[RMDB]
RNA sequence: GGGAACGACUCGAGUAGAGUCGAAAAGUUAUGGAAAACGUCUUAGCUACCACUACAACAACAAUGCUGGACGGUGAUGGUUCGACUUACUCGAAACCAUCACGUAGUGGUACUCGUUCCCAUUCAAUGGUUGUUUUUCAUUCGUGAAAAACAACCAAAAAGAAACAACAACAACAAC
Reactivity to 2A3 in 0.01 (KOAc 150mM, MgCl2 10mM, bicine 150mM(pH8.5), 24C), signal-to-noise 1, nucleotides 027 to 126: g070u070u120a110u280g130g060a090a110a020a000c030g030u020c070u110u100a020g000c040u020a020c000c020a020c030u060a030c030a120a000c000a030a010c040a050a140u230g090c020u070g070g050a090c030g000g060u000g030a020u010g000g020u000u020c000g000a030c030u150u160a000c000u080c000g030a030a050a030c010c000a000u000c000a020c010g000u030a000g000u000g010g000u000a030c010u010c010g010u010u000c020c030c000a010u100u070c020a010a090
Reactivity to DMS in 0.01 (KOAc 150mM, MgCl2 10mM, bicine 150mM(pH8.5), 24C), signal-to-noise 2, nucleotides 027 to 126: g010u030u020a070u010g010g020a090a050a080a090c020g020u010c030u000u010a080g020c090u000a010c000c040a040c000u000a020c060a120a100c100a070a060c160a090a100u010g000c040u000g010g000a060c080g020g060u000g000a040u000g000g000u000u000c010g030a010c210u020u010a080c200u000c000g000a040a020a030c000c000a000u000c010a020c050g010u000a000g050u000g000g000u000a080c080u000c040g020u010u000c020c000c000a090u010u020c130a060a180
About this RNA
Structure probing data (2A3 and DMS) for a 177-nucleotide construct. It was measured as part of the RMDB library M2PK90. For 2A3 the reverse transcriptase was SuperScript II with manganese. For DMS, 1,571 sequencing reads were counted. The RNA was probed in 150 mM KOAc, 10 mM MgCl2 and 150 mM bicine (pH 8.5) at 24 C.